[RMDB]
RNA sequence: GGGAACGACUCGAGUAGAGUCGAAAAAGUACCGGUACGCCGGUACAAAAGCGAUCUUCUAGAUGGUUGUAAAACAUCGAGUAUUACAACCACUGGAAUUUCUCUAAGAUCAUCUACGGAUGAUCAAUAAAACCAUUAACUUCGGUUAAUGGUUUUAAAAAGAAACAACAACAACAAC
Reactivity to DMS in 0.01 (KOAc 150mM, MgCl2 10mM, bicine 150mM(pH8.5), 24C), signal-to-noise 7, nucleotides 027 to 126: a100g010u000a000c000c010g000g000u010a100c270g040c010c000g020g000u000a000c010a020a050a120a050g000c250g000a020u000c040u000u000c000u010a010g010a090u000g010g000u000u010g000u010a000a010a100a040c030a210u040c230g000a220g010u010a060u000u000a010c000a000a000c000c000a010c000u000g000g000a010a000u000u000u000c010u000c020u010a100a110g000a010u000c000a000u000c000u010a140c140g030g000a010u000g010a010u000c000a070a070
Reactivity to 2A3 in 0.01 (KOAc 150mM, MgCl2 10mM, bicine 150mM(pH8.5), 24C), signal-to-noise 7, nucleotides 027 to 126: a000g010u010a000c010c000g010g010u060a060c240g010c040c000g000g000u000a000c010a000a050a000a010g030c030g020a020u010c000u030u000c000u000a090g020a300u020g000g010u010u000g000u010a010a020a060a050c040a070u280c150g040a070g070u040a080u030u010a000c000a000a000c000c000a000c000u000g000g000a000a000u000u010u000c030u000c010u050a110a040g000a010u000c000a000u000c000u010a010c180g070g000a000u000g000a000u000c010a000a000